[RMDB]
RNA sequence: GGGAACGACUCGAGUAGAGUCGAAAACAACAGGGAGGUUGGUGGUGGACGAGCCACUCGCCAACCGGGUCAGGUCCGGAAGGAAGCAGCCCAAACGAGCCAGGCACGGGUCGCCGUGCCAGUACAAUUACUUAUUACUCUUCGGAGUAAUAAGUAAAAAAGAAACAACAACAACAAC
Reactivity to 2A3 in 0.01 (KOAc 150mM, MgCl2 10mM, bicine 150mM(pH8.5), 24C), signal-to-noise 4, nucleotides 027 to 126: c020a010a010c020a050g080g050g020a080g040g000u010u010g010g020u010g000g010u010g010g050a060c070g020a060g240c020c000a010c010u060c020g010c010c000a000a000c010c010g000g000g030u030c000a000g000g020u010c000c010g050g110a070a040g030g000a010a020g000c010a010g000c000c000c020a030a090a010c090g020a030g070c040c060a090g000g000c000a000c000g040g010g080u190c070g060c180c000g000u000g000c000c000a000g000u020a010c040a030a090
Reactivity to DMS in 0.01 (KOAc 150mM, MgCl2 10mM, bicine 150mM(pH8.5), 24C), signal-to-noise 9, nucleotides 027 to 126: c040a100a130c140a100g000g000g000a160g010g000u000u000g010g030u000g010g020u000g000g010a180c300g010a190g010c010c010a010c010u010c030g010c000c000a010a030c010c010g000g010g000u000c020a300g000g010u000c010c000g010g040a100a130g010g010a020a010g000c010a250g000c000c010c010a050a090a130c140g000a080g010c060c050a140g000g010c010a010c010g000g000g010u010c300g010c000c000g010u000g010c000c010a040g010u000a060c150a100a130